An RNA of 177 nucleotides, treated with DMS and 2A3 and read out base by base.
2A3 adducts were read by reverse transcription with SuperScript II with manganese.
[RMDB]
RNA sequence: GGGAACGACUCGAGUAGAGUCGAAAACCCCAGCCUCCUCGCUGGCGCCGGCUGGGCAACGAUCCGAGGGAACUAUUCCUCUCGAGAAUCGGCAAAUGGGGCCCCUCGCUCGUAUCUCCGAGAGGAGCUAUACACAAAUCUUCGGAUUUGUGUAUAGAAAAGAAACAACAACAACAAC
Reactivity to DMS in 0.01 (KOAc 150mM, MgCl2 10mM, bicine 150mM(pH8.5), 24C), signal-to-noise 3, nucleotides 027 to 126: c080c000c010c090a090g010c050c030u000c040c020u000c080g020c050u010g010g000c110g010c050c040g000g010c030u000g030g020g010c060a100a060c050g000a050u000c030c000g010a070g010g000g010a050a160c200u010a150u010u010c040c000u010c000u010c000g000a120g010a060a150u000c020g000g000c090a040a090a110u000g010g000g010g000c030c010c000c030u000c040g000c070u000c070g020u010a100u010c010u000c020c030g000a170g000a130g000g010a040g020
Reactivity to 2A3 in 0.01 (KOAc 150mM, MgCl2 10mM, bicine 150mM(pH8.5), 24C), signal-to-noise 3, nucleotides 027 to 126: c020c000c000c000a000g020c000c000u070c000c010u040c050g020c040u060g020g010c040g040c010c010g070g100c020u100g020g010g000c030a050a050c010g020a020u000c010c010g000a020g000g020g010a050a020c040u080a220u150u090c010c020u120c010u000c020g210a220g030a180a080u030c000g020g000c050a060a090a180u160g020g010g050g040c000c000c000c010u030c020g020c020u110c040g060u150a160u090c010u020c030c010g030a030g000a020g070g000a000g020
Conditions: 150 mM KOAc, 10 mM MgCl2 and 150 mM bicine (pH 8.5), 24 C.
For 2A3, 2,890 sequencing reads were counted.